[RMDB]
RNA sequence: GGGAACGACUCGAGUAGAGUCGAAAAGAAUAAAUAGUGUCUUGGAGCGCGCGGAGUAAACAUAUAUGGUUCAUAUAUGUCCGUAGGCUCGUAAAGAAAGCGCGUCGAAGCGAGAGAAGACUCGCAACACUAGCGGUAGCUUCGGCUACCGCUAGUGAAAAGAAACAACAACAACAAC
Reactivity to DMS in 0.01 (KOAc 150mM, MgCl2 10mM, bicine 150mM(pH8.5), 24C), signal-to-noise 2, nucleotides 027 to 126: g010a170a080u040a050a070a100u060a090g010u020g000u040c000u000u010g020g010a020g000c020g020c070g040c000g000g020a280g010u020a080a090a070c000a000u000a000u020a000u000g040g030u020u030c070a030u010a000u000a000u010g010u000c000c020g110u000a190g000g000c000u000c000g000u010a030a060a080g000a000a080a040g000c030g000c050g010u030c070g000a140a100g000c010g000a030g030a150g000a210a080g010a080c000u000c000g000c030a160a060
Reactivity to 2A3 in 0.01 (KOAc 150mM, MgCl2 10mM, bicine 150mM(pH8.5), 24C), signal-to-noise 2, nucleotides 027 to 126: g070a000a030u090a170a050a000u140a060g040u030g000u030c030u020u010g120g000a010g010c300g040c000g000c000g180g000a000g040u300a010a100a000c000a000u010a000u000a000u000g300g000u110u120c020a000u000a000u000a000u000g020u000c000c000g010u030a110g020g010c000u000c000g000u050a000a030a000g060a000a050a000g040c000g000c010g020u020c100g090a200a020g030c010g000a010g010a010g040a070a000g040a040c000u010c000g010c000a000a000
This 177-nucleotide RNA was probed chemically with DMS and 2A3. The 2A3 profile rests on 1,238 reads. High DMS reactivity at an A or C suggests that its Watson-Crick edge is free. For 2A3 the reverse transcriptase was SuperScript II with manganese. Source: RMDB library OK1LIB, as collected in RNAgym. Conditions: 150 mM KOAc, 10 mM MgCl2 and 150 mM bicine (pH 8.5), 24 C. The DMS profile rests on 3,068 reads.